[RMDB]
RNA sequence: GGGAACGACUCGAGUAGAGUCGAAAAACGAUGCCCUGGUGACUUUUACAGUAAACAUAUACAAGGAAGUCAUGACCAAGGAGGGACUCUCCAUCACCAAGAUAAGCAGUUAUGAAGGUAACGACUCGCAGCUUAUCAAGAUUCCACUGCUGAUAGCGUUCUUCUAACUGUUCGCAGUUAGAAGAACAAAAGAAACAACAACAACAAC
Reactivity to DMS in 0.01 (KOAc 150mM, MgCl2 10mM, bicine 150mM(pH8.5), 24C), signal-to-noise 2, nucleotides 027 to 156: a100c070g000a130u010g000c030c000c000u010g050g060u000g020a050c000u010u000u000u000a070c070a300g050u010a040a150a100c160a120u000a230u000a090c080a170a200g010g020a030a040g010u000c030a080u000g000a100c020c010a110a060g000g000a090g050g020g000a070c020u000c030u000c050c030a110u020c020a100c060c000a080a240g010a000u000a030a000g020c000a050g010u010u000a110u000g010a070a100g010g020u010a080a090c090g000a120c020u000c070g000c020a100g000c020u010u000a040u000c010a090a130g000a140u000u000c020c060a030c100u010g000c000u000g000a090u000a090g000c180
Reactivity to 2A3 in 0.01 (KOAc 150mM, MgCl2 10mM, bicine 150mM(pH8.5), 24C), signal-to-noise 4, nucleotides 027 to 156: a000c050g030a040u080g020c020c000c000u030g070g010u010g020a030c000u050u030u060u180a110c060a060g020u090a040a230a020c100a080u210a030u040a130c050a060a060g060g010a010a000g010u000c030a050u080g070a060c070c020a090a050g030g010a020g020g060g030a070c030u010c000u000c100c010a030u060c010a010c050c030a080a010g020a040u030a030a010g010c020a010g000u040u110a070u120g090a080a050g060g010u040a040a030c040g050a060c040u020c090g090c060a020g020c020u020u000a000u050c010a010a000g030a030u070u000c030c000a050c040u060g050c020u040g050a140u110a060g100c060
Structure probing data (DMS and 2A3) for a 207-nucleotide construct. Values cover nucleotides 27 to 156. DMS adducts were read by reverse transcription with MarathonRT. It was measured as part of the RMDB library OK3TST. The RNA was probed in 150 mM KOAc, 10 mM MgCl2 and 150 mM bicine (pH 8.5) at 24 C.